The record gives the reactivity of an RNA of 177 nucleotides to 2A3. The data come from the RNA Mapping Database (RMDB), library OK1LIB. For 2A3 the reverse transcriptase was SuperScript II with manganese. For 2A3, 750 sequencing reads were counted. The reactions ran in a buffer of 150 mM KOAc, 10 mM MgCl2 and 150 mM bicine (pH 8.5), at 24 C.

RNA sequence: GGGAACGACUCGAGUAGAGUCGAAAAGAAGUGGCAGGGACAUGCCCCAGAAGCUCGUUCUAGCAACAUAUGUUUGGCUAGUUCGAGCGAUUAGUCUCGAGGAGCGUCCUCUCGCCUCUUGACGAGACGCUGGAGGAUCAUUCGUGAUCCUCCAGCGAAAAGAAACAACAACAACAAC
Reactivity to 2A3 in 0.01 (KOAc 150mM, MgCl2 10mM, bicine 150mM(pH8.5), 24C), signal-to-noise 1, nucleotides 027 to 126: g160a050a000g020u000g010g000c050a000g000g050g030a010c080a010u100g040c000c000c000c000a000g010a220a030g000c000u000c000g000u000u000c000u000a000g000c000a010a070c010a020u240a000u300g300u050u070u020g100g040c000u000a000g000u010u000c040g000a040g000c000g020a000u000u030a030g020u000c020u090c070g030a230g010g000a040g000c110g000u030c000c000u090c070u000c090g000c000c000u040c000u000u080g050a030c010g000a000g000a010